Conditions: 150 mM KOAc, 10 mM MgCl2 and 150 mM bicine (pH 8.5), 24 C. Structure probing data (DMS and 2A3) for a 207-nucleotide construct. The DMS profile rests on 20,548 reads. 2A3 adducts were read by reverse transcription with SuperScript II with manganese. DMS adducts were read by reverse transcription with MarathonRT.

[RMDB]
RNA sequence: GGGAACGACUCGAGUAGAGUCGAAAAAGAGGUUAAUAGCAUAACUGAUUCUACGGAUCAGAUUUAUGUGUUUAGUCCUUUCGAGUUACGUCAACUGGGUGACAUCGAUAUGCCAUUGGAAGUGGUAGUGUAUGGUUGGAUGACAGAUGUCAAAUUGAUAUAUCAUAACCUUCGGGUUAUGAUAUAUAAAAGAAACAACAACAACAAC
Reactivity to DMS in 0.01 (KOAc 150mM, MgCl2 10mM, bicine 150mM(pH8.5), 24C), signal-to-noise 6, nucleotides 027 to 156: a070g020a050g030g020u000u000a020a050u000a300g030c000a030u000a010a060c020u000g000a030u000u000c030u000a140c250g030g020a020u000c010a020g010a150u000u000u000a010u010g000u000g000u000u000u000a070g010u000c010c010u000u000u000c050g010a200g010u000u000a070c070g010u000c040a050a100c050u000g000g010g010u000g000a040c030a040u000c080g020a150u000a070u000g010c000c010a090u000u000g020g010a100a140g030u000g010g020u000a040g040u010g020u010a070u000g000g010u000u000g000g010a090u000g010a300c070a070g000a110u000g010u000c020a020a090a210u000u000g000
Reactivity to 2A3 in 0.01 (KOAc 150mM, MgCl2 10mM, bicine 150mM(pH8.5), 24C), signal-to-noise 9, nucleotides 027 to 156: a000g060a030g000g020u040u040a040a020u050a110g010c010a010u000a010a020c000u000g020a020u090u070c090u120a090c200g080g000a000u000c010a010g010a050u030u090u020a010u010g030u000g030u020u040u040a020g050u090c010c010u030u060u060c060g020a050g030u050u090a060c060g040u040c100a130a080c120u100g090g000g020u050g020a010c010a100u040c030g030a020u010a030u170g030c020c020a040u030u070g060g030a100a040g040u030g040g020u050a070g030u040g030u070a070u090g060g030u060u040g040g020a060u050g020a020c040a050g060a050u090g050u030c010a030a060a080u080u110g030